RNA sequence: GGGAACGACUCGAGUAGAGUCGAAAAUAUACAUAAGAAGUCGGCGCAGCUCCCGAAUCGCGGUGUGCGAUGCUACGUCGCGCGAGCGACGUAGCUGCUGAGCGGACGGCUAGCAAAAGCUAGCCAAAAUCCCGCAUUUAUUCGUAAAUGCGGGAUUAAAAGAAACAACAACAACAAC
Reactivity to 2A3 in 0.01 (KOAc 150mM, MgCl2 10mM, bicine 150mM(pH8.5), 24C), signal-to-noise 2, nucleotides 027 to 126: u030a000u050a010c060a060u300a160a120g160a210a040g040u000c030g100g000c010g000c010a000g010c040u040c020c020c000g010a020a020u000c010g020c020g150g260u150g130u220g180c010g010a030u020g000c020u000a000c000g010u010c000g000c010g000c100g060a070g000c000g000a000c000g000u010a000g000c000u000g000c000u040g000a010g000c000g010g000a000c040g000g000c000u000a000g000c000a000a150a300a080g010c000u000a000g000c000c000a080a000
Reactivity to DMS in 0.01 (KOAc 150mM, MgCl2 10mM, bicine 150mM(pH8.5), 24C), signal-to-noise 1, nucleotides 027 to 126: u120a090u040a080c160a220u020a140a120g020a120a210g000u010c020g030g040c000g000c000a050g000c000u000c000c060c010g060a150a040u000c000g000c020g070g010u030g010u120g000c000g000a020u000g020c000u010a000c050g100u000c020g030c000g000c300g000a300g050c000g000a100c000g010u000a000g000c000u000g000c070u000g000a020g000c000g020g000a010c050g020g010c000u000a000g000c050a170a050a120a150g020c030u000a000g040c000c000a040a060